[RMDB]
RNA sequence: GGGAACGACUCGAGUAGAGUCGAAAAUUGGAGCUACCGGGUUGAGGAGGAGCAGAGAGCAGCUCGAGUAAGGAUGGGCUCUCACACCUCCUGGAGCCAGCACCCUCCAGGAUAUUUCCAUGAGGAACCCUUCUUACACAUUCGUGUGUAAGAAGGGAAAAGAAACAACAACAACAAC
Reactivity to DMS in 0.01 (KOAc 150mM, MgCl2 10mM, bicine 150mM(pH8.5), 24C), signal-to-noise 6, nucleotides 027 to 126: u040u000g010g000a020g000c160u010a050c300c090g000g000g000u010u010g000a030g010g010a000g010g010a100g020c130a100g000a040g030a000g000c010a080g030c070u000c010g030a170g020u030a140a120g000g010a070u030g000g000g020c000u000c000u000c000a170c060a100c020c010u000c000c000u000g000g020a060g010c040c030a050g010c040a080c220c300c010u000c000c010a050g000g000a140u010a050u010u000u000c010c000a090u040g000a150g020g020a090a170
Reactivity to 2A3 in 0.01 (KOAc 150mM, MgCl2 10mM, bicine 150mM(pH8.5), 24C), signal-to-noise 4, nucleotides 027 to 126: u050u010g010g000a020g000c030u040a090c070c010g040g030g010u050u040g090a020g010g030a000g020g000a050g030c070a050g100a000g020a000g000c040a040g060c000u020c050g120a110g090u140a090a110g110g050a090u190g070g060g000c000u000c000u010c000a080c010a020c030c000u000c000c000u000g020g020a000g030c000c000a010g030c030a050c000c010c000u000c000c000a020g020g040a030u030a170u180u080u030c050c040a060u160g070a070g140g000a030a040
Overview:
This 177-nucleotide RNA was probed chemically with DMS and 2A3. 2A3 adducts were read by reverse transcription with SuperScript II with manganese. In probing experiments dimethyl sulfate is read out at A N1 and C N3, which are open when not base-paired. The RNA was probed in 150 mM KOAc, 10 mM MgCl2 and 150 mM bicine (pH 8.5) at 24 C.